[RMDB]
RNA sequence: GGGAACGACUCGAGUAGAGUCGAAAAGAUAUGGAUCCAGGAGAUGACGACAUCGGAAACGAUGUUCGUCUCUAUCUCUGGAUCCUAAGUCAAAAGUUCCACUACGAGUUCGCUCGUAGUGGAACAACGUGUCUACUAUCUUCGGAUAGUAGACACGAAAAGAAACAACAACAACAAC
Reactivity to 2A3 in 0.01 (KOAc 150mM, MgCl2 10mM, bicine 150mM(pH8.5), 24C), signal-to-noise 3, nucleotides 027 to 126: g010a010u030a010u150g000g000a010u010c000c010a050g210g190a080g070a040u270g010a010c010g010a000c010a000u000c000g050g000a050a030a010c030g000a010u020g030u210u030c000g010u000c010u000c000u040a030u020c050u000c000u020g000g000a000u000c000c000u000a010a000g000u010c020a030a000a050a270g010u000u000c010c020a010c010u000a000c000g000a020g020u080u170c260g190c170u000c000g000u000a010g000u000g000g000a000a010c000a000a000
Reactivity to DMS in 0.01 (KOAc 150mM, MgCl2 10mM, bicine 150mM(pH8.5), 24C), signal-to-noise 2, nucleotides 027 to 126: g000a010u000a140u010g000g000a000u000c000c010a010g000g000a030g000a040u000g000a020c000g000a030c000a000u010c000g000g010a050a060a080c000g010a030u000g000u000u000c010g010u000c000u000c300u020a070u000c030u010c010u000g000g000a010u000c000c000u000a000a050g000u010c000a080a120a140a190g000u000u000c000c000a020c010u000a010c010g000a030g000u000u030c300g000c000u000c000g020u000a000g010u000g000g000a000a010c010a040a050
The record gives the reactivity of an RNA of 177 nucleotides to 2A3 and DMS. Conditions: 150 mM KOAc, 10 mM MgCl2 and 150 mM bicine (pH 8.5), 24 C. For 2A3, 7,591 sequencing reads were counted.